[RMDB]
RNA sequence: GGGAACGACUCGAGUAGAGUCGAAAACUCUAGAGAAACUUCACAAUGAGCACUGUUCUGAAUUUCAUGGCCUGGCCCAUGAGCCUUUGAGUGAUGCUAUCAUGUUGGCGUGUGUUACCAGAACACCAAAGGAACAAUUCUUCGGAAUUGUUCCUUUAAAAGAAACAACAACAACAAC
Reactivity to DMS in 0.01 (KOAc 150mM, MgCl2 10mM, bicine 150mM(pH8.5), 24C), signal-to-noise 3, nucleotides 027 to 126: c020u000c030u010a120g000a110g000a090a090a100c080u000u000c030a050c050a070a120u010g000a050g030c030a060c110u000g030u000u000c040u020g020a070a100u000u000u000c010a030u000g020g010c020c130u000g010g010c200c020c020a020u000g010a060g000c060c030u000u000u000g010a160g010u010g010a050u000g000c030u010a110u000c070a080u020g010u010u000g010g020c120g030u000g020u000g000u000u020a080c110c080a070g010a090a050c030a050c070c190
An RNA of 177 nucleotides, treated with DMS and read out base by base. For DMS, 2,490 sequencing reads were counted. It was measured as part of the RMDB library OK2TST. DMS adducts were read by reverse transcription with MarathonRT. Reactivities are rounded to 0.1 and cut off at 0 and 3. Values cover nucleotides 27 to 126.